[RMDB]
RNA sequence: GGGAACGACUCGAGUAGAGUCGAAAAGAUCAGGGUUUCCCGUGUCGUAUUCGUCCUGCGAUGGCGUGAUAUUGUAGGGGACAAUGGACGUCAGUGCAACAUCACGGCGGGGGCUCUUUUCGGUGGUUCUUUUUUCAUGUUUCGGCGUGAAAGAGGGAAAAGAAACAACAACAACAAC
Reactivity to 2A3 in 0.01 (KOAc 150mM, MgCl2 10mM, bicine 150mM(pH8.5), 24C), signal-to-noise 9, nucleotides 027 to 126: g010a020u030c010a000g020g000g020u010u060u150c000c000c000g010u030g030u020c010g010u030a040u070u050c050g020u070c030c050u030g010c010g060a050u030g040g030c000g000u020g060a120u010a010u020u020g020u030a070g010g090g010g010a010c010a010a030u050g030g020a000c000g000u010c010a010g020u010g060c030a030a010c000a030u050c020a000c000g010g000c000g010g000g000g000g000c000u000c000u000u000u000u000c020g020g020u040g040g010u040
Reactivity to DMS in 0.01 (KOAc 150mM, MgCl2 10mM, bicine 150mM(pH8.5), 24C), signal-to-noise 9, nucleotides 027 to 126: g000a030u010c040a040g000g010g010u010u010u040c000c000c010g020u010g010u020c010g010u000a070u020u020c110g010u020c090c100u010g000c020g010a050u010g010g000c010g020u000g000a090u010a040u000u000g010u010a110g020g010g010g010a300c030a050a060u020g010g010a090c070g010u000c010a030g010u010g010c030a040a040c100a050u010c100a020c010g000g000c010g000g000g000g000g000c010u000c000u000u000u000u000c010g000g020u000g010g010u010